The record gives the reactivity of an RNA of 177 nucleotides to DMS. DMS adducts were read by reverse transcription with MarathonRT. The reactions ran in a buffer of 150 mM KOAc, 10 mM MgCl2 and 150 mM bicine (pH 8.5), at 24 C.

RNA sequence: GGGAACGACUCGAGUAGAGUCGAAAAGGUCUGAUCUUCGGAUCAGACCAACUCUGAUUCCCAAUAGCUGCGUAUCUUGGCUAAGACGGAUAGCCGUUGCCACUCAGGGGGGUUUCGACCCCCCUAAGUCCAAAUCUUUAUUCGUAAAGAUUUGGACAAAAGAAACAACAACAACAAC
Reactivity to DMS in 0.01 (KOAc 150mM, MgCl2 10mM, bicine 150mM(pH8.5), 24C), signal-to-noise 4, nucleotides 027 to 126: g020g000u000c000u000g010a010u000c000u000u020c200g020g000a000u000c000a010g010a010c000c000a010a050c120u000c120u000g010a190u000u000c010c000c000a150a230u000a060g000c030u010g010c100g010u000a060u010c050u000u010g000g010c040u000a070a090g010a100c090g000g000a150u020a050g010c020c000g010u000u000g000c030c030a110c200u000c160a020g000g000g020g010g010g000u000u000u000c170g010a030c000c000c000c000c010c000u000a000a030